Structure probing data (2A3) for a 207-nucleotide construct. For 2A3 the reverse transcriptase was SuperScript II with manganese. The RNA was probed in 150 mM KOAc, 10 mM MgCl2 and 150 mM bicine (pH 8.5) at 24 C. High 2A3 reactivity points to a flexible backbone, as in loops and unpaired stretches.

RNA sequence: GGGAACGACUCGAGUAGAGUCGAAAACUUAUUAGUAACUAAUCCAAAGCAAGUAUAGGAGAACAGGUUUUCAACUAUUUUUAGGCAGAUAAAAAAUAGUAUUUGACAGUCUAACACUAACUGAACACCACGCUCUCUUACUUCGGUAAGAGAGCAAGCUUAGGCAAUACUUCGGUAUUGCCUAAGCAAAAGAAACAACAACAACAAC
Reactivity to 2A3 in 0.01 (KOAc 150mM, MgCl2 10mM, bicine 150mM(pH8.5), 24C), signal-to-noise 1, nucleotides 027 to 156: c020u120u020a060u080u100a170g060u050a030a090c060u090a290a030u030c010c010a100a040a000g030c060a060a040g040u060a140u100a200g050g000a080g000a040a030c060a100g000g020u010u040u040u070c000a040a010c000u000a020u030u040u000u040u080a080g090g000c040a020g040a080u140a080a080a020a000a020a000u010a020g050u040a140u070u010u050g130a050c070a030g000u070c030u110a160a020c070a040c040u060a070a000c080u050g030a120a000c060a020c070c000a010c080g010c000u000c000u000c000u000u000a000c000u020u020c050g060g000u000a000a020g020a020g000a000g000c000a020a000